[RMDB]
RNA sequence: GGGAACGACUCGAGUAGAGUCGAAAAGAUAUGGAGAAUAGGGAGGUCAGACCCAAAUAGUUCGGAAACGAAGUUUGCUGACCGAAGAACUAUUCUCCUAAGUCAAAGAUACCGUUCGCGGUAUCAACCCUUCUCAAUACUUCGGUAUUGAGAAGGGAAAAGAAACAACAACAACAAC
Reactivity to DMS in 0.01 (KOAc 150mM, MgCl2 10mM, bicine 150mM(pH8.5), 24C), signal-to-noise 3, nucleotides 027 to 126: g000a000u010a170u010g000g010a030g010a030a000u010a010g000g000g000a030g010g000u000c010a030g000a140c170c270c110a060a070a080u010a080g010u000u000c010g000g010a030a010a080c000g020a040a080g000u000u000u000g020c020u000g000a020c020c010g010a060a110g020a060a160c010u000a010u000u000c000u000c000c000u000a000a080g020u000c010a100a090a140g000a010u010a010c000c000g010u000u020c260g020c030g020g000u000a000u000c010a090a150
Reactivity to 2A3 in 0.01 (KOAc 150mM, MgCl2 10mM, bicine 150mM(pH8.5), 24C), signal-to-noise 2, nucleotides 027 to 126: g000a000u040a000u050g000g010a010g020a000a000u000a030g000g000g000a010g000g020u010c000a010g060a200c000c010c100a060a120a100u190a040g280u080u050c020g000g000a000a020a020c020g010a060a040g060u120u180u240g070c010u010g010a010c020c000g100a260a000g000a020a010c000u000a010u010u000c000u000c000c000u000a010a010g020u010c030a160a030a100g010a000u010a010c060c000g010u040u060c300g000c000g080g010u000a010u000c010a010a050

The data come from the RNA Mapping Database (RMDB), library TTRDEL. An RNA of 177 nucleotides, treated with DMS and 2A3 and read out base by base. The reactions ran in a buffer of 150 mM KOAc, 10 mM MgCl2 and 150 mM bicine (pH 8.5), at 24 C. In probing experiments dimethyl sulfate is read out at A N1 and C N3, which are open when not base-paired. For 2A3 the reverse transcriptase was SuperScript II with manganese.